[RMDB]
About this RNA: An RNA of 207 nucleotides, treated with DMS and 2A3 and read out base by base. Conditions: 150 mM KOAc, 10 mM MgCl2 and 150 mM bicine (pH 8.5), 24 C. Source: RMDB library RSTRND, as collected in RNAgym.
RNA sequence: GGGAACGACUCGAGUAGAGUCGAAAAUAUCUCGUAAAUCCAACGUUACGAUUAAAUAGUCGCAAACGACGACAACUACGCUCAGGGCGCGCUGGCAGCGUAACAACUGCUAGCUUCUAGUCCGGCCCGGAGGUGAUGUGCCCAUUCAUCACCGAUGGCAAGCUUAACUGUUCGCAGUUAAGCUUGCAAAAGAAACAACAACAACAAC
Reactivity to DMS in 0.01 (KOAc 150mM, MgCl2 10mM, bicine 150mM(pH8.5), 24C), signal-to-noise 2, nucleotides 027 to 156: u010a050u000c070u000c060g010u010a060a110a090u010c020c060a140a150c070g010u010u000a010c030g000a050u000u010a100a110a260u020a080g040u000c000g010c060a060a060a070c000g010a290c040g010a050c060a060a090c050u000a040c000g010c080u010c050a140g020g030g030c030g000c130g000c070u030g000g010c030a040g000c000g050u000a170a210c240a120a030c000u000g000c000u000a030g020c010u000u000c030u010a050g000u000c010c040g000g020c030c010c030g000g020a160g010g000u000g030a020u000g020u000g010c060c040c000a230u000u000c020a000u010c000a030c000c000g010a120u050g010
Reactivity to 2A3 in 0.01 (KOAc 150mM, MgCl2 10mM, bicine 150mM(pH8.5), 24C), signal-to-noise 5, nucleotides 027 to 156: u110a030u030c060u000c020g020u020a030a030a070u160c170c080a140a070c130g020u020u010a010c010g010a030u060u240a070a090a120u190a050g010u000c020g010c070a130a230a150c110g200a040c010g020a010c030a080a060c070u180a040c070g030c040u100c130a050g000g000g000c010g020c000g000c000u010g000g000c010a010g000c010g040u050a030a030c030a020a020c000u000g000c000u000a000g000c000u050u040c030u040a010g010u000c000c000g020g000c020c000c000g030g020a030g000g000u010g000a000u000g020u050g050c010c030c030a040u110u100c000a000u010c000a000c000c000g010a020u040g060